[RMDB]
RNA sequence: GGGAACGACUCGAGUAGAGUCGAAAAGCAAGAGCGUUCGCGCUCUUGCAAAGAAAAUCCGUCCAAAGGGUGAGGAUGGGAAGGACGCAAAACCCACACCCAAAACACUCUGCUUCGGCAGAGUGAAUCUUAGAUACGUCUUCGGACGUAUCUAAGAAAAAGAAACAACAACAACAAC
Reactivity to 2A3 in 0.01 (KOAc 150mM, MgCl2 10mM, bicine 150mM(pH8.5), 24C), signal-to-noise 2, nucleotides 027 to 126: g010c000a000a010g000a010g010c020g030u070u100c160g020c000g040c110u000c000u000u010g000c010a000a010a000g040a000a110a000a040u040c010c010g030u040c010c000a130a090a090g010g000g010u030g010a030g090g010a040u060g020g000g050a070a110g130g030a050c090g010c210a000a080a080a110c000c010c000a020c010a020c020c000c000a030a050a020a020c010a000c000u000c010u000g010c000u030u060c260g100g000c000a000g000a000g000u000g000a000a010
Reactivity to DMS in 0.01 (KOAc 150mM, MgCl2 10mM, bicine 150mM(pH8.5), 24C), signal-to-noise 2, nucleotides 027 to 126: g010c010a020a040g000a000g000c000g020u000u030c240g030c000g010c000u010c000u000u010g000c030a010a060a120g000a100a110a110a060u010c030c010g020u000c020c010a050a170a080g010g000g000u000g010a160g030g000a120u000g000g020g020a110a080g030g010a090c130g020c120a060a010a100a140c000c010c000a140c040a040c020c000c000a060a080a080a170c010a030c020u000c000u000g000c000u000u010c210g000g020c000a000g000a010g010u000g000a030a050